[RMDB]
RNA sequence: GGGAACGACUCGAGUAGAGUCGAAAACAUCCACUGCUACGGCAGUGGAUGAACGAGGUAGGUACGCCUACCUCGAAAGAGGGAUGUCUUCAUAGACAUUAAACGUCCAUGGUACGCCAUGGACGAACCCCUACUCCAGUUUCGACUGGAGUAGGGGAAAAGAAACAACAACAACAAC
Reactivity to 2A3 in 0.01 (KOAc 150mM, MgCl2 10mM, bicine 150mM(pH8.5), 24C), signal-to-noise 2, nucleotides 027 to 126: c010a000u000c000c000a010c000u000g010c000u010a080c180g130g050c010a020g000u010g010g000a000u000g030a010a000c020g000a030g000g000u010a000g010g040u050a000c190g070c030c000u000a010c000c010u010c000g000a020a010a000g160a040g000g100g050a010u000g000u030c010u220u080c090a110u300a140g010a010c010a010u040u130a120a140a040c010g000u000c010c010a010u000g020g050u040a060c260g040c040c000a000u000g000g010a000c000g000a000a000
Reactivity to DMS in 0.01 (KOAc 150mM, MgCl2 10mM, bicine 150mM(pH8.5), 24C), signal-to-noise 1, nucleotides 027 to 126: c000a050u000c000c020a000c000u000g010c010u000a040c140g090g030c000a000g050u000g030g020a020u000g030a030a020c040g010a050g030g010u000a030g000g010u000a050c190g030c000c000u000a020c000c000u000c010g010a000a080a110g000a130g000g020g000a030u000g010u000c000u010u000c220a180u000a030g010a000c000a010u000u010a020a060a180c000g030u000c000c000a020u030g010g000u000a100c300g030c040c000a000u000g000g010a000c010g000a020a050
About this RNA: An RNA of 177 nucleotides, treated with 2A3 and DMS and read out base by base. DMS adducts were read by reverse transcription with MarathonRT. Reactivities are given for positions 27 through 126. The reactions ran in a buffer of 150 mM KOAc, 10 mM MgCl2 and 150 mM bicine (pH 8.5), at 24 C. The DMS profile rests on 1,048 reads.